[RMDB]
RNA sequence: GGGAACGACUCGAGUAGAGUCGAAAAGAUGCCACACACUUAGCGAACAUGCAGCCAGGACUUAAUCCAAGCUGUCUAAAUUUUGGAGAUACUUCCCUAAGUAGGAAGGACAUCACUGAAACGAAAGAGAUAAAAUUCCUGUGGCAAGGAAAGGGCAGUCAGGCACGAUAUUCGUAUCGUGCCUGACAAAAGAAACAACAACAACAAC
Reactivity to 2A3 in 0.01 (KOAc 150mM, MgCl2 10mM, bicine 150mM(pH8.5), 24C), signal-to-noise 1, nucleotides 027 to 156: g050a040u010g000c020c000a030c000a000c000a000c020u100u030a040g010c090g040a050a060c040a060u060g010c040a000g040c030c040a020g000g010a090c050u300u300a080a030u020c000c030a000a080g000c000u070g130u130c030u070a090a150a100u040u050u010u000g000g010a040g000a000u030a090c000u000u000c020c020c000u050a100a010g030u080a100g170g030a010a010g000g000a040c040a070u010c000a000c070u040g000a020a000a050c090g010a000a000a300g030a010g070a000u220a230a110a020a070u050u000c060c060u040g000u040g040g010c020a000a000g040g020a110a130a000g000g010g070c000a000
The record gives the reactivity of an RNA of 207 nucleotides to 2A3. The 2A3 profile rests on 447 reads.